[RMDB]
RNA sequence: GGGAACGACUCGAGUAGAGUCGAAAAGGAGGAGACCCUAGAUAGGUUUUAUGACGUAGACCUAUGGAGCAAGACCCAAACAGCAUAUGAACGAUCAUUUAUAUAUGUGCCAGACGUCGAGCGUAUGUAUAGCUGGGACGGCCAAGCGGGAGGAAUAAUAGAAAGGACCAUUCGUGGUCCUUUCUAUAAAAGAAACAACAACAACAAC
Reactivity to DMS in 0.01 (KOAc 150mM, MgCl2 10mM, bicine 150mM(pH8.5), 24C), signal-to-noise 1, nucleotides 027 to 156: g000g030a110g040g010a190g000a130c070c030c020u000a160g030a170u000a050g000g010u000u000u020u010a060u030g020a170c150g040u000a110g000a010c000c000u000a080u010g010g030a050g020c020a090a140g000a160c020c020c000a020a140a090c040a170g000c040a090u010a100u010g000a100a110c000g020a080u000c040a070u030u020u000a060u010a070u010a030u010g000u020g000c020c080a150g010a090c050g000u010c050g010a130g010c060g020u010a040u000g010u010a070u000a130g020c050u020g010g010g000a050c050g020g030c010c050a010a160g000c030g010g000g020a080g020g010a040a070u010a040
Reactivity to 2A3 in 0.01 (KOAc 150mM, MgCl2 10mM, bicine 150mM(pH8.5), 24C), signal-to-noise 1, nucleotides 027 to 156: g020g050a000g000g040a040g000a030c040c000c030u020a030g020a120u020a020g060g080u080u090u050u140a100u140g110a060c080g030u040a020g000a000c000c040u000a020u040g040g000a060g000c050a070a030g060a150c050c000c080a000a080a000c020a020g020c000a010u070a070u120g040a060a010c010g080a010u120c020a030u050u220u020a180u070a040u050a040u190g000u070g000c000c000a040g010a060c020g060u070c010g010a000g030c010g010u080a020u070g010u050a100u070a140g000c030u030g000g000g060a070c020g000g000c050c000a070a030g020c070g020g000g020a080g070g040a100a070u230a170